[RMDB]
Record summary:
Conditions: 150 mM KOAc, 10 mM MgCl2 and 150 mM bicine (pH 8.5), 24 C. An RNA of 177 nucleotides, treated with 2A3 and DMS and read out base by base. For 2A3 the reverse transcriptase was SuperScript II with manganese.
RNA sequence: GGGAACGACUCGAGUAGAGUCGAAAAUAGCUGACGUUCGCGUCAGCUAAAAGCACCAAAACCUCCUGGCGGUGCGGCGCCGGCCCCGCCGGGAAGGCCGGCAACUCGAUGGGUUCGCCCAUCGAAACAAUUUAUAAUCUUUCGAGAUUAUAAAUUGAAAAGAAACAACAACAACAAC
Reactivity to 2A3 in 0.01 (KOAc 150mM, MgCl2 10mM, bicine 150mM(pH8.5), 24C), signal-to-noise 2, nucleotides 027 to 126: u030a000g020c000u000g000a010c000g010u030u040c280g020c010g070u010c000a000g010c000u000a000a010a000a020g000c000a040c060c000a000a050a080a200c010c020u040c010c030u060g040g010c040g050g000u020g010c010g000g040c070g020c030c050g040g000c010c000c010c000g000c000c000g020g000g010a000a010g010g010c010c010g030g030c020a010a050c050u010c000g010a000u000g000g010g040u040u030c130g120c000c000c000a000u020c000g000a000a000a000
Reactivity to DMS in 0.01 (KOAc 150mM, MgCl2 10mM, bicine 150mM(pH8.5), 24C), signal-to-noise 4, nucleotides 027 to 126: u010a010g000c000u000g010a010c010g030u010u020c220g030c010g000u000c000a010g010c000u000a000a020a060a120g000c120a120c020c010a060a070a130a180c050c020u000c030c030u000g010g000c040g010g010u000g020c030g020g010c100g010c060c060g020g000c000c010c020c020g020c000c030g000g000g000a030a020g010g010c080c030g010g020c040a110a080c160u000c010g010a010u000g000g000g010u000u010c180g020c010c000c010a010u000c010g010a010a080a160
For 2A3, 5,669 sequencing reads were counted.
Values are in units of 0.01, from 0 to 300, in steps of 10.
DMS adducts were read by reverse transcription with MarathonRT.